The record gives the reactivity of an RNA of 207 nucleotides to DMS and 2A3. DMS adducts were read by reverse transcription with MarathonRT. 2A3 adducts were read by reverse transcription with SuperScript II with manganese.
RNA sequence: GGGAACGACUCGAGUAGAGUCGAAAAUGAAAUGAGAGCUAACAAUCAGAAAUGAUCAGGAAACAACUCCAACCACAGUGAGCAAGAUAAAGCGAGGUGACCCCUGUGAAACGUCAUUGGAGCCCUCCAAAGGGUCCACAACCCACAGGUUGAGGAAGAGCUGAAAAUAUUUCGAUAUUUUCAGCUCAAAAGAAACAACAACAACAAC
Reactivity to DMS in 0.01 (KOAc 150mM, MgCl2 10mM, bicine 150mM(pH8.5), 24C), signal-to-noise 1, nucleotides 027 to 156: u000g030a100a090a100u010g010a100g020a070g000c000u000a090a180c100a050a090u000c040a040g000a200a080a170u000g000a080u050c040a150g000g020a080a040a100c050a120a040c010u000c000c010a030a160c000c030a040c040a050g000u000g000a140g040c040a090a060g010a100u000a050a090a140g000c010g000a010g060g020u000g000a110c010c060c010c020u000g050u000g010a060a120a070c010g030u000c090a180u000u000g000g010a070g000c000c010c010u000c040c130a070a060a110g000g010g010u010c020c040a050c010a040a160c010c000c020a040c060a010g010g000u010u010g010a120g000g000a120a200
Reactivity to 2A3 in 0.01 (KOAc 150mM, MgCl2 10mM, bicine 150mM(pH8.5), 24C), signal-to-noise 1, nucleotides 027 to 156: u080g010a000a020a040u090g000a000g000a010g060c040u080a080a080c030a080a020u050c030a030g050a020a120a070u060g010a020u080c080a080g000g070a140a160a060c060a030a100c020u010c000c030a040a050c050c010a060c010a030g060u060g080a020g000c060a090a000g030a080u160a080a070a000g110c100g020a030g000g030u040g030a070c100c000c000c000u000g000u000g060a080a130a060c040g050u020c050a000u050u050g060g000a070g080c010c000c000u020c010c010a200a110a000g000g000g000u040c030c030a000c020a000a050c010c030c010a010c020a010g020g000u020u040g030a050g040g030a050a050
For DMS, 1,910 sequencing reads were counted.
The 2A3 profile rests on 776 reads.